Notes: An RNA of 177 nucleotides, treated with DMS and 2A3 and read out base by base. Conditions: 150 mM KOAc, 10 mM MgCl2 and 150 mM bicine (pH 8.5), 24 C. For DMS, 8,576 sequencing reads were counted. 2A3 is a SHAPE reagent: it acylates the 2'-hydroxyl of flexible nucleotides of all four kinds. Source: RMDB library OK1LIB, as collected in RNAgym.
RNA sequence: GGGAACGACUCGAGUAGAGUCGAAAAGCAGUCCGACUAAGGUCACUGCGAACACGACAGGGCUGGAAUGUCACCUGGAGUGGAUUAGGACGGACUACUCCGUCUCAGGACAGUAGGACGUCCGAAAGGCAAGCAGGACGUUCGCGUCUUGCUUGCCAAAAGAAACAACAACAACAAC
Reactivity to DMS in 0.01 (KOAc 150mM, MgCl2 10mM, bicine 150mM(pH8.5), 24C), signal-to-noise 4, nucleotides 027 to 126: g010c000a000g000u000c120c100g030a020c040u010a020a130g020g000u020c050a080c010u010g000c000g010a180a100c020a020c020g000a140c000a030g000g010g010c050u010g010g050a150a050u040g010u000c070a170c010c010u000g010g000a210g010u000g000g020a070u030u010a130g000g000a010c000g000g010a040c000u000a000c000u000c140c160g000u000c040u000c120a130g000g000a000c060a050g000u000a010g000g020a020c010g000u000c000c010g000a030a070a080
Reactivity to 2A3 in 0.01 (KOAc 150mM, MgCl2 10mM, bicine 150mM(pH8.5), 24C), signal-to-noise 5, nucleotides 027 to 126: g000c000a000g020u100c040c060g000a080c140u170a120a020g150g010u040c070a000c020u000g020c010g000a060a010c010a000c020g040a000c000a000g000g030g030c020u100g060g170a200a060u160g050u150c070a070c130c010u020g000g010a010g010u020g030g000a040u070u200a020g000g000a000c000g000g010a000c000u000a010c000u080c100c050g130u050c060u040c070a000g030g090a010c030a010g000u000a000g000g000a000c000g000u000c000c000g010a020a010a000